[RMDB]
RNA sequence: GGGAACGACUCGAGUAGAGUCGAAAACUAUGUGGGUAAAGCCUCUCAUUAGCCGCGCGAACCUCUGCAACGGAAGAUCAUUCAUAGCAACAAUACAUUAGUUUCCAGUGAAUUGCUGCCGUCAGCUAGGUUCAUAAUUGUUCGCAAUUAUGAACCUAAAAGAAACAACAACAACAAC
Reactivity to 2A3 in 0.01 (KOAc 150mM, MgCl2 10mM, bicine 150mM(pH8.5), 24C), signal-to-noise 2, nucleotides 027 to 126: c040u040a070u140g030u080g000g020g070u080a070a040a050g050c000c010u000c010u000c030a060u060u070a000g000c030c020g070c020g000c040g040a050a070c000c000u030c030u090g010c020a070a010c000g040g020a040a010g020a100u090c020a030u070u060c020a020u050a080g050c010a010a040c000a040a020u070a160c040a050u020u060a030g010u020u040u010c010c050a020g020u040g050a080a070u100u050g000c010u020g050c030c000g090u100c010a000g030c010u040
Reactivity to DMS in 0.01 (KOAc 150mM, MgCl2 10mM, bicine 150mM(pH8.5), 24C), signal-to-noise 2, nucleotides 027 to 126: c050u000a080u010g030u020g000g000g000u000a070a060a150g010c000c030u000c040u000c040a090u020u000a090g010c030c020g020c100g000c050g000a060a070c050c070u010c040u000g000c070a050a060c120g010g000a060a030g010a100u010c060a030u000u020c050a050u000a100g010c030a030a020c040a040a040u010a070c070a030u000u000a080g000u000u000u010c050c020a150g000u010g020a070a050u020u000g010c030u010g020c050c110g020u010c050a050g020c140u000

Conditions: 150 mM KOAc, 10 mM MgCl2 and 150 mM bicine (pH 8.5), 24 C. This 177-nucleotide RNA was probed chemically with 2A3 and DMS. The DMS profile rests on 1,373 reads.